[RMDB]
RNA sequence: GGGAACGACUCGAGUAGAGUCGAAAACCAGCCAGGGGUUUUCAUCCUCAAGUUUCUUGAUCUUCUUGUUGGAUCGCCGGAGAUCCUUCUCGAGCAGUCGCCUUUUCUUCCUUUCUUCUACCCACUGGGACAAUAAGUAGUUCGCUACUUAUUGUCCAAAAGAAACAACAACAACAAC
Reactivity to DMS in 0.01 (KOAc 150mM, MgCl2 10mM, bicine 150mM(pH8.5), 24C), signal-to-noise 2, nucleotides 027 to 126: c010c000a090g010c090c090a060g010g020g010g020u010u010u010u010c080a130u000c020c020u000c090a130a140g000u000u000u000c020u020u000g020a100u010c030u020u000c080u000u000g030u010u020g010g010a050u000c020g020c070c130g000g010a120g000a040u000c020c030u000u010c030u000c040g000a110g030c100a080g010u000c080g000c080c010u000u000u000u000c020u010u000c030c010u000u000u000c040u000u000c080u000a160c020c000c020a120c210u010g020
Reactivity to 2A3 in 0.01 (KOAc 150mM, MgCl2 10mM, bicine 150mM(pH8.5), 24C), signal-to-noise 1, nucleotides 027 to 126: c000c000a000g080c020c010a020g000g020g060g090u020u020u090u140c030a060u040c000c020u010c030a030a040g040u080u020u120c040u060u210g060a060u010c010u090u000c030u050u120g050u000u060g040g000a030u070c000g030c050c070g110g040a060g010a040u000c020c000u000u010c030u010c000g050a030g000c010a000g080u040c030g070c010c000u000u140u060u000c000u000u050c010c000u010u100u040c000u040u010c020u040a080c000c000c030a060c070u100g060